[RMDB]
RNA sequence: GGGAACGACUCGAGUAGAGUCGAAAAAGGGAGGUGCAAUAGGGCGUGAAAUCAGUUGGCGAUCGAACGACGGGGCAUACAAGGUCCUCUACACAAUGACCGUAGCGCGAGCUACCAGUAAGAAGUACAUGUACCGGGAAUUCGUUCCCGGUACAUGAAAAGAAACAACAACAACAAC
Reactivity to 2A3 in 0.01 (KOAc 150mM, MgCl2 10mM, bicine 150mM(pH8.5), 24C), signal-to-noise 4, nucleotides 027 to 126: a000g060g010g010a030g000g040u080g050c030a050a100u120a170g040g020g000c020g040u100g090a020a040a050u120c020a010g040u040u050g050g000c040g010a060u050c020g040a080a060c020g060a020c020g010g000g040g010c030a030u090a180c030a050a020g080g000u040c020c000u040c020u030a020c100a010c010a060a040u110g010a030c010c040g020u010a010g000c030g000c020g010a010g000c010u000a010c000c000a020g010u020a030a010g040a090a020g050u040a040
Reactivity to DMS in 0.01 (KOAc 150mM, MgCl2 10mM, bicine 150mM(pH8.5), 24C), signal-to-noise 5, nucleotides 027 to 126: a070g000g000g010a060g010g030u010g010c080a040a110u020a070g020g000g000c070g020u010g000a050a080a070u020c050a050g000u000u010g000g000c050g010a050u010c030g010a100a070c150g010a090c080g000g000g000g020c060a090u030a080c210a070a130g010g010u010c010c020u000c070u000a060c110a060c140a060a100u010g000a050c120c160g000u000a020g000c030g010c240g000a160g010c030u000a010c030c030a060g000u020a050a050g010a080a070g020u000a120
Chemical mapping of a 177-nucleotide RNA with 2A3 and DMS. Conditions: 150 mM KOAc, 10 mM MgCl2 and 150 mM bicine (pH 8.5), 24 C.